[RMDB]
RNA sequence: GGGAACGACUCGAGUAGAGUCGAAAAUCGCAAAACCGCGGCAAGUGGAGUUAGCGAGAGGAGGCUGGGUUUUGGCUUCCUUGAGCAAUCGGUCACCGAGAAGGUGUGGUCGUUACCGUGAAAUUCCGUGACAAAAUAACGUUCGCGUUAUUUUGAAACCUUCGUGAUGAUUCGUCAUCACGAAGGUAAAAGAAACAACAACAACAAC
Reactivity to 2A3 in 0.01 (KOAc 150mM, MgCl2 10mM, bicine 150mM(pH8.5), 24C), signal-to-noise 1, nucleotides 027 to 156: u060c040g000c020a000a030a050a030c080c030g040c020g030g020c060a120a080g010u100g060g040a090g030u060u070a030g000c030g020a000g000a000g000g000a000g010g000c020u120g130g050g210u070u120u220u240g050g000c000u000u000c000c000u000u030g000a030g010c000a000a050u090c030g010g020u030c000a010c010c090g020a090g090a190a040g120g000u070g010u040g060g000u020c010g000u050u090a030c000c020g000u020g060a080a070a000u090u010c010c040g060u120g060a030c000a000a000a000a000u000a000a000c000g000u000u070c200g000c000g100u000u000a000u000u020u010u050g000a060a000